This 177-nucleotide RNA was probed chemically with DMS and 2A3.
2A3 adducts were read by reverse transcription with SuperScript II with manganese.
Values are in units of 0.01, from 0 to 300, in steps of 10.

RNA sequence: GGGAACGACUCGAGUAGAGUCGAAAAGAUAGGUCCAAUCUAAUUCUGCAUCAUGGUUUAUUUAUGUAGUCUCGCUUUUGGACAAAACUAACCCACAGAUCUUUUAUUAUCCUUGUGCUUGUGGCAUGAAGCAUCAUAGGUUCGCCUAUGAUGCUUCAAAAGAAACAACAACAACAAC
Reactivity to DMS in 0.01 (KOAc 150mM, MgCl2 10mM, bicine 150mM(pH8.5), 24C), signal-to-noise 1, nucleotides 027 to 126: g000a100u000a080g070g000u000c010c000a050a050u010c100u010a120a030u000u010c000u000g000c060a070u000c160a020u040g000g020u010u010u070a070u010u020u050a020u010g000u000a010g000u010c060u000c130g000c240u000u000u000u000g050g010a010c030a030a070a110a080c150u000a160a080c070c010c030a020c070a060g040a030u000c000u000u030u000u000a080u000u000a160u010c010c010u000u000g040u010g010c110u000u000g000u010g030g000c090a180u000
Reactivity to 2A3 in 0.01 (KOAc 150mM, MgCl2 10mM, bicine 150mM(pH8.5), 24C), signal-to-noise 5, nucleotides 027 to 126: g030a010u080a040g100g020u000c010c020a010a000u010c010u050a070a070u030u010c000u020g020c000a040u030c020a070u050g300g000u140u170u300a090u080u120u010a000u030g010u020a010g010u000c020u030c120g120c160u080u060u010u050g000g010a010c030a020a140a040a010c090u120a070a060c000c030c000a010c000a010g090a040u040c010u010u050u030u030a200u110u100a080u100c020c000u090u080g060u060g120c060u090u040g030u030g050g000c000a040u040